Structure probing data (2A3 and DMS) for a 177-nucleotide construct. The RNA was probed in 150 mM KOAc, 10 mM MgCl2 and 150 mM bicine (pH 8.5) at 24 C.

RNA sequence: GGGAACGACUCGAGUAGAGUCGAAAAGUGGAUAGUUUCGACUAUCCACACAACUGAUGAUCUUACAGUGGAGGAUGAAGAAGAUGGCCAUCCGAUCCUCAAAUAGCACAGAGUUCGCUCUGUGCAAACCCCAUACGGGAUUCGUCCCGUAUGGGGUAAAAGAAACAACAACAACAAC
Reactivity to 2A3 in 0.01 (KOAc 150mM, MgCl2 10mM, bicine 150mM(pH8.5), 24C), signal-to-noise 3, nucleotides 027 to 126: g000u000g000g000a010u000a010g010u000u070u100c150g010a010c010u000a000u010c000c000a000c000a000c000a000a020c000u070g030a070u060g010a050u090c030u040u200a070c060a070g060u040g120g010a020g020g000a040u040g050a080a170g040a060a010g080a100u140g100g030c040c010a020u000c010c010g070a040u000c000c010u020c000a070a090a100u170a060g000c000a000c000a020g010a000g000u070u050c140g040c060u000c010u010g010u000g000c010a000a000
Reactivity to DMS in 0.01 (KOAc 150mM, MgCl2 10mM, bicine 150mM(pH8.5), 24C), signal-to-noise 2, nucleotides 027 to 126: g020u000g010g000a000u000a000g020u010u000u020c200g000a030c000u000a000u000c010c000a000c010a030c170a120a070c130u000g000a050u000g010a150u000c050u000u010a090c070a040g010u000g020g020a110g010g000a040u010g000a140a090g040a080a080g020a040u010g000g010c080c030a060u000c000c040g000a080u000c000c000u000c040a030a060a120u000a060g000c000a010c010a010g000a010g020u000u000c280g000c010u000c000u000g010u020g000c010a010a050